[RMDB]
RNA sequence: GGGAACGACUCGAGUAGAGUCGAAAAAGGAGACGGCAUUAUGCACACUCGCUGCCACUGUGGAGCUGAGAUCACUGGACAUGUCAAAAACGGGACGAUGAGGAUCGUCGGUCCUAGGACCUGCAGGGUUCCUGCGGAAAUUCGUUUCCGCAGGAACAAAAGAAACAACAACAACAAC
Reactivity to DMS in 0.01 (KOAc 150mM, MgCl2 10mM, bicine 150mM(pH8.5), 24C), signal-to-noise 3, nucleotides 027 to 126: a060g000g000a070g020a060c120g010g010c050a110u020u020a130u000g020c000a070c130a150c070u010c100g000c000u000g010c070c050a100c150u000g000u000g000g000a060g000c050u010g020a120g000a060u020c020a050c080u000g010g010a080c060a070u000g000u030c140a050a030a040a170a100c100g000g020g000a080c010g010a040u010g000a110g000g020a040u010c020g010u010c020g010g030u000c000c000u000a110g020g010a080c050c000u000g010c080a060g010g000
Reactivity to 2A3 in 0.01 (KOAc 150mM, MgCl2 10mM, bicine 150mM(pH8.5), 24C), signal-to-noise 6, nucleotides 027 to 126: a000g110g010a040g010a030c050g020g000c030a030u070u090a080u300g040c030a030c000a010c040u050c020g040c020u090g050c030c010a130c090u090g050u130g050g020a050g040c030u030g060a030g020a090u120c010a040c090u050g000g020a030c010a090u100g030u080c020a050a070a040a050a040c070g020g000g030a010c010g000a010u080g040a050g170g060a090u100c010g020u010c020g040g080u020c000c000u030a060g000g040a020c010c010u030g010c030a030g090g060